[RMDB]
RNA sequence: GGGAACGACUCGAGUAGAGUCGAAAAGCUCCUACUUCGGUAGGAGCAAAAAAGCGUACUACCAUUGAGGAUGAACUACCUUAGGGUCCCAAAUAGGACCUGGGAGGCAUCUCCCCACCAAUGGUAUCGCAAAAAACCACACUUUCGAGUGUGGUAAGAUCUACAAGUGGUUCGCCACUUGUAGAUCAAAAGAAACAACAACAACAAC
Reactivity to 2A3 in 0.01 (KOAc 150mM, MgCl2 10mM, bicine 150mM(pH8.5), 24C), signal-to-noise 1, nucleotides 027 to 156: g020c000u000c000c000u000a000c000u030u040c200g060g020u000a000g000g000a000g010c000a000a000a000a000a000a000g020c040g030u070a070c010u000a000c000c010a000u000u020g020a040g000g010a000u100g040a140a180c010u210a300c090c000u040u200a020g000g070g000u090c020c060c000a130a270a070u200a110g040g030a000c080c010u080g060g060g000a000g000g040c030a040u000c040u040c060c020c000c000a100c020c010a000a000u010g000g000u000a000u070c040g000c000a190a000a000a000a000a000c000c000a000c000a010c000u020u100u130c210g050a020g000u000g000u000g050g000u010a000a010
Reactivity to DMS in 0.01 (KOAc 150mM, MgCl2 10mM, bicine 150mM(pH8.5), 24C), signal-to-noise 1, nucleotides 027 to 156: g050c000u000c000c000u020a080c000u000u010c300g080g060u010a030g020g030a040g040c000a000a000a060a050a070a070g010c010g010u000a030c120u000a050c070c000a050u000u000g000a170g000g000a130u010g000a100a130c060u000a080c000c010u000u020a300g000g000g020u000c000c000c000a000a220a210u000a020g000g000a030c000c000u000g010g030g010a020g030g020c010a130u000c080u000c070c020c030c020a170c170c000a000a020u000g010g000u000a040u000c000g130c020a000a000a050a020a040a000c000c000a020c000a000c000u000u000u000c250g040a000g000u000g040u000g020g000u000a000a040
The record gives the reactivity of an RNA of 207 nucleotides to 2A3 and DMS. DMS adducts were read by reverse transcription with MarathonRT. The data come from the RNA Mapping Database (RMDB), library RNAMAK. For 2A3, 931 sequencing reads were counted.